[RMDB]
RNA sequence: GGGAACGACUCGAGUAGAGUCGAAAAGAUAUGGAGCUGAUCAUUAGCUCUUGGAUUUAUAGGGAAGUCUAUAUCGGAAACGAUAUAGUCGCCCUAUUGUCAGAGCUAAUGCGUAGCUCCUAAGUCACACUCAACCUAUGUUCGCAUAGGUUGAGUGAAAAGAAACAACAACAACAAC
Reactivity to DMS in 0.01 (KOAc 150mM, MgCl2 10mM, bicine 150mM(pH8.5), 24C), signal-to-noise 3, nucleotides 027 to 126: g000a040u000a300u000g000g000a000g000c000u010g010a140u010c010a020u000u000a000g010c010u010c000u000u020g020g010a010u000u000u000a000u000a020g000g010g020a120a180g030u000c000u000a000u010a010u010c010g030g000a170a120a280c010g000a010u000a010u000a000g020u000c030g000c000c000c010u000a000u000u000g010u000c000a010g000a010g000c010u000a010a000u000g010c200g010u000a010g000c010u000c000c020u000a010a070g000u000c040a300
Reactivity to 2A3 in 0.01 (KOAc 150mM, MgCl2 10mM, bicine 150mM(pH8.5), 24C), signal-to-noise 2, nucleotides 027 to 126: g050a030u070a040u240g010g010a000g020c010u030g020a030u100c000a010u010u010a000g010c030u010c000u040u090g020g000a070u290u300u220a030u030a000g060g010g010a300a240g100u020c000u000a010u010a000u020c010g020g000a050a040a080c020g000a020u010a000u000a000g010u000c000g060c000c000c010u010a000u000u020g000u010c010a000g000a000g000c020u010a010a000u000g040c040g030u060a000g000c000u000c000c000u000a010a000g000u000c000a020

This 177-nucleotide RNA was probed chemically with DMS and 2A3.
The RNA was probed in 150 mM KOAc, 10 mM MgCl2 and 150 mM bicine (pH 8.5) at 24 C.
High 2A3 reactivity points to a flexible backbone, as in loops and unpaired stretches.
2A3 adducts were read by reverse transcription with SuperScript II with manganese.
For DMS the reverse transcriptase was MarathonRT.